[RMDB]
RNA sequence: GGGAACGACUCGAGUAGAGUCGAAAAUGAGCACGCUCGGUUUCAAGACGCCAUCCAGCUGGCUUGGCGAAUUUCUGGCCAUUGUGGAAGGCGCGAUGGGGCUGGCCAUCGUGGUGCUGCUGUUCAACCCAAAAUCAGCUUUCGAGCUGAUUUUGGGAAAAGAAACAACAACAACAAC
Reactivity to 2A3 in 0.01 (KOAc 150mM, MgCl2 10mM, bicine 150mM(pH8.5), 24C), signal-to-noise 1, nucleotides 027 to 126: u150g010a000g040c000a000c050g040c010u190c030g040g000u000u040u020c020a030a000g000a000c000g000c020c000a000u000c000c000a010g090c060u040g000g010c000u030u120g050g000c100g110a170a150u060u150u120c000u000g010g000c050c000a020u020u210g130u020g020g020a050a060g000g040c010g030c010g010a020u050g000g060g010g040c050u010g040g000c030c000a080u130c120g040u050g110g000u010g000c020u020g060c020u010g010u000u060c020a050a090
Reactivity to DMS in 0.01 (KOAc 150mM, MgCl2 10mM, bicine 150mM(pH8.5), 24C), signal-to-noise 1, nucleotides 027 to 126: u020g000a080g020c010a040c100g000c050u000c040g010g010u000u020u000c040a050a050g010a300c010g010c010c010a070u000c020c000a040g000c100u000g010g010c030u000u000g010g010c300g010a060a070u010u000u010c040u000g000g000c010c010a030u000u010g030u000g020g000a050a080g030g000c000g000c000g000a210u000g000g010g000g000c000u000g000g040c060c050a040u000c120g030u010g010g020u000g010c020u000g040c050u010g000u010u000c070a090a170
Structure probing data (2A3 and DMS) for a 177-nucleotide construct. DMS adducts were read by reverse transcription with MarathonRT. It was measured as part of the RMDB library OK2TST. In probing experiments dimethyl sulfate is read out at A N1 and C N3, which are open when not base-paired. For 2A3 the reverse transcriptase was SuperScript II with manganese.